RNA sequence: GGGAACGACUCGAGUAGAGUCGAAAAUAAUCUGACUGGCUAUGAGGUCAGACCUCAUACGCAUCUCAUAUCAUACCAGUCAUGGGGUGCCGAGACUUGGGUUAAUACACAAACUCAGAAUUGUGUGGAUAAUAUUCUAUUUCGAUAGAGUGUUAUCAAAAGAAACAACAACAACAAC
Reactivity to DMS in 0.01 (KOAc 150mM, MgCl2 10mM, bicine 150mM(pH8.5), 24C), signal-to-noise 9, nucleotides 027 to 126: u040a080a100u020c060u010g000a040c070u010g000g010c100u000a020u020g010a050g010g010u010c180a110g010a300c040c000u000c030a030u010a080c230g010c040a040u000c010u000c020a040u020a080u010c080a080u020a100c140c100a060g010u010c070a020u000g010g000g010g020u000g000c020c090g000a080g010a080c130u010u010g000g000g000u010u010a050a110u030a040c060a030c050a020a010a050c060u020c120a110g010a080a090u010u000g010u000g000u000g010
Reactivity to 2A3 in 0.01 (KOAc 150mM, MgCl2 10mM, bicine 150mM(pH8.5), 24C), signal-to-noise 9, nucleotides 027 to 126: u080a000a050u040c030u030g030a010c010u020g060g030c040u060a030u080g050a020g030g020u050c050a010g060a090c010c000u030c010a040u040a040c040g000c010a040u010c010u000c010a030u030a040u120c030a010u040a170c030c030a040g080u080c060a030u040g010g000g000g010u030g000c010c030g050a040g020a070c030u040u040g020g010g000u020u060a020a000u100a060c020a000c010a030a050a030c020u070c100a050g110a120a150u050u040g020u010g010u040g060

Chemical mapping of a 177-nucleotide RNA with DMS and 2A3. For 2A3, 29,359 sequencing reads were counted. The RNA was probed in 150 mM KOAc, 10 mM MgCl2 and 150 mM bicine (pH 8.5) at 24 C.